[RMDB]
RNA sequence: GGGAACGACUCGAGUAGAGUCGAAAAGGGUCAUUUCAAAGAGGGCUUAUGAGGCUGUGAAACCCAGAGCUCUUAACGCUGUGACCAAAGAUGGAAGUUCUCUAUAGGAAGCCAUAGCACUCCUAAUAAAGCAAUGAAGUUUCGACUUCAUUGCUUUAAAAGAAACAACAACAACAAC
Reactivity to DMS in 0.01 (KOAc 150mM, MgCl2 10mM, bicine 150mM(pH8.5), 24C), signal-to-noise 2, nucleotides 027 to 126: g010g020g010u010c010a000u000u020u000c010a040a180a300g000a010g020g010g000c010u020u000a080u020g020a110g050g010c060u020g000u030g010a090a110a160c020c000c000a060g000a020g000c000u000c010u000u000a040a280c210g010c020u000g020u000g010a020c000c010a050a080a080g000a090u010g000g000a070a110g010u010u010c020u000c050u010a140u000a110g000g010a030a110g010c040c110a070u000a080g000c110a130c130u010c020c000u010a040a110u020
Reactivity to 2A3 in 0.01 (KOAc 150mM, MgCl2 10mM, bicine 150mM(pH8.5), 24C), signal-to-noise 4, nucleotides 027 to 126: g100g000g000u000c010a010u030u000u020c040a050a050a020g030a000g010g000g000c000u080u030a240u300g060a130g050g010c080u110g100u180g270a120a060a020c000c010c000a000g010a000g000c000u000c000u000u020a030a020c070g000c020u000g000u000g010a000c010c000a050a060a000g090a020u080g010g060a060a100g030u020u020c020u000c030u070a040u050a090g000g020a040a010g000c010c050a090u100a070g050c070a040c050u010c000c000u040a090a040u060
Source: RMDB libraries RFM100 and RFMREP, as collected in RNAgym. An RNA of 177 nucleotides, treated with DMS and 2A3 and read out base by base. The RNA was probed in 150 mM KOAc, 10 mM MgCl2 and 150 mM bicine (pH 8.5) at 24 C. 2A3 adducts were read by reverse transcription with SuperScript II with manganese. DMS adducts were read by reverse transcription with MarathonRT.